[RMDB]
RNA sequence: GGGAACGACUCGAGUAGAGUCGAAAAACUCAGUAGCAACAUCCCAGGACGUCAUCGCUUAUAGGCUGCUCCGUUCACCAGAGCUCACUGGUGUUCGGCUAAGAUUAAAGAGCUCGCCUCUCGCACCCUGACCUUCGGGUCGCUUGAGGUUAAAUCAGUAUUGACAUAUCUUCGGAUAUGUCAAUACAAAAGAAACAACAACAACAAC
Reactivity to 2A3 in 0.01 (KOAc 150mM, MgCl2 10mM, bicine 150mM(pH8.5), 24C), signal-to-noise 4, nucleotides 027 to 156: a000c080u080c060a050g030u130a030g060c040a010a060c010a120u030c010c010c010a020g020g080a050c040g050u070c040a110u110c060g030c060u170u160a080u100a230g060g020c010u010g000c000u000c010c000g010u010u010c000a000c000c010a020g020a020g030c010u010c020a140c030u010g000g010u010g000u010u000c000g000g010c020u050a050a030g030a150u190u190a220a130a010g010a000g000c020u020c010g010c010c000u000c000u010c000g000c000a010c000c020c050u080g160a100c020c020u120u100c060g010g000g000u030c060g000c000u000u000g000a000g000g010u010u010a010a010a020u140c020a020
Reactivity to DMS in 0.01 (KOAc 150mM, MgCl2 10mM, bicine 150mM(pH8.5), 24C), signal-to-noise 1, nucleotides 027 to 156: a030c040u000c040a090g050u000a100g020c030a090a070c050a110u000c010c010c000a210g010g000a070c030g030u010c060a110u000c030g030c020u000u000a100u000a170g000g020c030u000g030c030u000c010c000g030u000u000c010a020c000c030a030g000a060g050c030u000c080a160c020u000g000g020u010g030u000u000c040g010g030c050u000a070a160g020a290u000u020a050a060a100g010a070g060c010u000c290g000c000c000u000c000u000c130g000c030a060c000c020c020u020g010a100c090c070u060u000c220g010g010g010u000c070g020c000u000u000g000a030g000g000u000u010a040a050a030u020c030a130

An RNA of 207 nucleotides, treated with 2A3 and DMS and read out base by base. Source: RMDB library ARCHII, as collected in RNAgym. The 2A3 profile rests on 2,672 reads.